RNA sequence: GGGAACGACUCGAGUAGAGUCGAAAACAUGUUUCAAUACCCAUCUGACUAAACACGCACUCCAAGGUUAAGAGUCCAUAUACCGCCUUGUGUCUUGUCUCCUCAUGGUGCCGAAGCAAUGGCGGAGCACACAUACCCGGUUCGCCGGGUAUGUGUGAAAAGAAACAACAACAACAAC
Reactivity to DMS in 0.01 (KOAc 150mM, MgCl2 10mM, bicine 150mM(pH8.5), 24C), signal-to-noise 3, nucleotides 027 to 126: c100a090u000g010u000u000u020c040a070a080u000a130c060c020c020a130u000c080u020g020a080c040u010a050a070a090c060a100c110g000c060a070c060u000c070c050a030a090g020g000u000u010a060a110g020a130g000u000c070c100a050u000a090u000a130c020c010g010c010c000u000u000g010u000g000u020c080u000u000g000u000c010u000c000c000u000c130a100u010g050g020u000g000c010c040g000a030a090g010c040a030a020u010g010g020c000g000g010a140g010
Reactivity to 2A3 in 0.01 (KOAc 150mM, MgCl2 10mM, bicine 150mM(pH8.5), 24C), signal-to-noise 3, nucleotides 027 to 126: c030a060u090g040u040u110u050c090a080a050u150a140c000c000c010a020u030c050u040g040a030c010u080a060a040a000c040a010c020g010c040a040c030u050c020c040a120a050g050g000u040u030a090a030g030a040g030u000c040c010a080u130a020u030a230c010c010g060c000c020u040u010g030u010g030u040c020u020u050g010u010c010u000c020c010u210c080a100u290g000g000u040g010c030c000g030a010a010g000c040a000a040u090g000g000c050g010g000a000g030

Chemical mapping of a 177-nucleotide RNA with DMS and 2A3. The 2A3 profile rests on 2,680 reads. Reactivities are given for positions 27 through 126. The RNA was probed in 150 mM KOAc, 10 mM MgCl2 and 150 mM bicine (pH 8.5) at 24 C. It was measured as part of the RMDB library VIROID. 2A3 adducts were read by reverse transcription with SuperScript II with manganese. For DMS, 1,854 sequencing reads were counted.